[RMDB]
RNA sequence: GGGAACGACUCGAGUAGAGUCGAAAAUGGCCAGUUAAGUGAAUGCUUUGCCACAGUCUUAGAAAUUGAUUAAGCUGGGCUAAGGUUCACUUAGGCUGGACGAAACUGAAUCAGUUCGCUGAUUCAGGGGCUAUUAAGACUUCGGUCUUAAUAGCCCAAAAGAAACAACAACAACAAC
Reactivity to 2A3 in 0.01 (KOAc 150mM, MgCl2 10mM, bicine 150mM(pH8.5), 24C), signal-to-noise 1, nucleotides 027 to 126: u160g090g020c030c000a000g020u000u020a030a000g000u000g040a000a000u140g210c010u020u020u000g000c010c010a200c010a260g050u110c020u030u020a030g130a210a300a270u170u260g090a130u170u070a000a000g000c020u010g000g020g020c000u010a020a000g000g000u000u000c010a000c020u000u000a010g010g000c020u010g000g000a010c030g020a080a050a000c000u000g010a000a000u010c000a020g040u030u080c150g000c090u000g000a000u000u020c000a000g010